[RMDB]
RNA sequence: GGGAACGACUCGAGUAGAGUCGAAAAUGCUAUUUGACCACAACGUGCCAUCGCGCGUAAGUCCAAGGGAAUACAGACCUUCCCAGGAGUCUGUACAGGAAGCGAGUACGACCACGUCACUGACGCAGACUGACGUACCUUUCGAGGUACGUCAGUCAAAAGAAACAACAACAACAAC
Reactivity to DMS in 0.01 (KOAc 150mM, MgCl2 10mM, bicine 150mM(pH8.5), 24C), signal-to-noise 1, nucleotides 027 to 126: u000g000c050u000a150u000u010u000g020a110c010c050a090c120a150a130c030g050u010g040c010c070a070u010c110g020c040g040c040g010u020a060a070g000u000c010c090a030a100g010g040g000a190a120u000a060c000a010g020a030c060c010u000u000c010c000c010a130g000g010a150g030u000c010u000g000u000a050c230a190g000g000a100a080g030c000g010a080g000u000a010c050g000a150c050c050a120c020g010u000c060a100c000u000g040a110c010g000c110a070
Reactivity to 2A3 in 0.01 (KOAc 150mM, MgCl2 10mM, bicine 150mM(pH8.5), 24C), signal-to-noise 1, nucleotides 027 to 126: u060g010c030u030a050u190u040u120g070a060c020c010a000c070a140a030c060g000u020g000c050c050a210u140c090g000c000g030c000g070u030a040a070g000u000c020c020a110a150g050g070g010a140a090u050a060c000a000g030a030c000c020u030u000c040c040c000a030g000g000a040g000u000c000u060g000u010a050c010a100g120g040a100a010g060c000g050a000g030u040a020c010g000a040c020c070a070c040g030u030c020a060c140u070g080a030c020g020c030a040